[RMDB]
RNA sequence: GGGAACGACUCGAGUAGAGUCGAAAAGGAAACAAACUCGAGCGAGGCGGAGAUCGAGCCCCAGUUCGUGCGCGGCGACCUGAAGUUGCUUCGGCUACUUCUUGAUCUCGUCCUGCGUGGAACGGCUCCUUCUUCACACCAGCCGGAGUUGGAAACUUCAUUUAACUCAGUUCGCUGAGUUAAAUGAAAAAGAAACAACAACAACAAC
Reactivity to DMS in 0.01 (KOAc 150mM, MgCl2 10mM, bicine 150mM(pH8.5), 24C), signal-to-noise 1, nucleotides 027 to 156: g050g000a110a130a130c060a080a050a080c020u000c040g010a080g030c020g000a040g030g000c020g000g010a080g070a020u000c010g000a050g020c010c000c000c020a180g030u000u000c050g080u000g000c000g000c070g030g040c040g000a040c010c040u010g010a020a040g010u000u010g000c030u000u010c230g060g050c020u000a020c000u000u000c010u000u000g000a130u000c000u000c020g030u030c040c010u000g030c000g000u000g020g000a050a040c000g010g000c010u000c000c010u010u000c010u010u000c020a150c040a040c020c050a300g000c000c000g000g030a040g010u000u000g000g000a140a080a210c080u010
Reactivity to 2A3 in 0.01 (KOAc 150mM, MgCl2 10mM, bicine 150mM(pH8.5), 24C), signal-to-noise 5, nucleotides 027 to 156: g070g020a130a080a010c050a040a080a010c020u020c030g050a070g030c000g000a020g030g000c040g000g000a000g000a000u000c000g000a000g000c010c010c000c030a010g010u020u030c070g120u110g040c000g000c010g000g000c010g000a010c000c010u000g000a000a000g000u010u030g010c000u040u080c240g130g000c010u010a000c000u020u000c000u030u060g130a210u140c030u020c090g120u190c020c070u100g000c000g000u030g020g010a010a010c000g000g000c000u000c000c000u000u000c000u000u010c000a010c010a020c010c010a000g000c010c020g050g020a040g010u020u040g030g030a080a110a040c010u010